Notes:
Structure probing data (DMS and 2A3) for a 177-nucleotide construct. It was measured as part of the RMDB library OK1LIB. For DMS, 1,148 sequencing reads were counted. The RNA was probed in 150 mM KOAc, 10 mM MgCl2 and 150 mM bicine (pH 8.5) at 24 C. High DMS reactivity at an A or C suggests that its Watson-Crick edge is free.
RNA sequence: GGGAACGACUCGAGUAGAGUCGAAAACGUCAGAAGACGAAGUCGGUCCAUCUGCGGUAAAAGACCGACAUAGAGUUCGAAGCAGAACGCACAACCGCAGACACACGAUUGGAGUGUGAAUGAGAGAAUACUACGGAGGCUUCGGCCUCCGUAGUAUAAAAGAAACAACAACAACAAC
Reactivity to DMS in 0.01 (KOAc 150mM, MgCl2 10mM, bicine 150mM(pH8.5), 24C), signal-to-noise 1, nucleotides 027 to 126: c000g000u020c000a070g010a030a160g000a060c010g000a250a070g000u000c070g000g000u020c030c160a270u000c000u080g000c010g000g040u030a100a010a100a090g000a090c000c000g000a000c040a010u000a120g000a130g000u000u000c000g010a090a010g000c140a090g000a000a020c110g040c060a100c130a170a220c000c030g000c000a000g000a130c000a000c000a100c070g000a300u010u000g000g000a050g040u000g000u000g000a170a050u100g000a070g000a050g010a070
Reactivity to 2A3 in 0.01 (KOAc 150mM, MgCl2 10mM, bicine 150mM(pH8.5), 24C), signal-to-noise 1, nucleotides 027 to 126: c000g000u000c000a080g000a300a040g050a150c000g000a030a030g040u000c000g000g000u030c090c020a050u000c000u000g000c000g020g020u000a000a000a210a000g000a000c000c000g020a000c000a000u100a000g040a030g010u060u020c000g000a000a000g210c190a040g010a000a060c070g040c030a050c020a110a100c000c000g000c000a000g000a020c000a000c060a000c000g030a130u080u200g160g040a200g020u010g010u000g070a000a070u230g030a080g070a040g000a060